[RMDB]
RNA sequence: GGGAACGACUCGAGUAGAGUCGAAAAGUUCACUGGUAGCGGAAUCCGAGUGUUCGACCUUUCUGGUAACGAGAAGCAAGUUAGGUAUCCUAACGGUUCCAACUACAUCAAGACCGCUAAUCCACGUAACGACCUGCGAAUGGUUACUGUAGCAGACGCCGUAGGAAUGUUUCGACAUUCCUACGGCAAAAGAAACAACAACAACAAC
Reactivity to 2A3 in 0.01 (KOAc 150mM, MgCl2 10mM, bicine 150mM(pH8.5), 24C), signal-to-noise 2, nucleotides 027 to 156: g030u000u050c050a000c050u010g010g020u000a000g010c000g020g020a050a030u010c050c050g010a060g010u100g000u050u070c020g010a050c010c000u040u200u120c080u060g140g070u190a060a080c060g000a030g000a140a030g070c180a110a030g000u040u020a020g000g060u130a160u120c000c020u080a030a050c070g030g020u100u010c010c020a010a040c020u130a020c010a100u020c050a050a040g060a020c000c000g000c000u020a060a010u070c000c000a040c110g000u020a050a040c040g080a100c010c020u010g090c020g030a220a040u070g100g000u080u020a140c030u100g060u100a010g030c010a000g000a050c120